RNA sequence: GGGAACGACUCGAGUAGAGUCGAAAAGAGGGAAAGGUGAAAAGAACUUUGAAAAAAGGUUUAAAAGUAUUUGACACCGUUUAUGUGGAAGCGUUUACUUGGACCCCAAACGUAGUUGUCUGGUUAGUACAGCCUACGAAUUCGUUCGUAGGCUGUAAAAAGAAACAACAACAACAAC
Reactivity to DMS in 0.01 (KOAc 150mM, MgCl2 10mM, bicine 150mM(pH8.5), 24C), signal-to-noise 2, nucleotides 027 to 126: g010a070g000g000g000a060a020a000g000g050u010g000a110a070a060a100g000a030a060c040u000u000u000g000a010a000a140a070a080a060g000g010u010u020u000a010a010a050a010g030u010a090u020u000u030g010a300c070a020c020c000g010u020u040u020a070u040g030u010g000g100a050a070g000c050g040u000u000u000a070c060u010u000g000g000a090c110c000c020c090a010a050a080c260g000u010a060g000u000u000g000u010c140u000g030g010u000u040a080g000

This 177-nucleotide RNA was probed chemically with DMS. Conditions: 150 mM KOAc, 10 mM MgCl2 and 150 mM bicine (pH 8.5), 24 C. Reactivities are rounded to 0.1 and cut off at 0 and 3. The data come from the RNA Mapping Database (RMDB), library RFM100.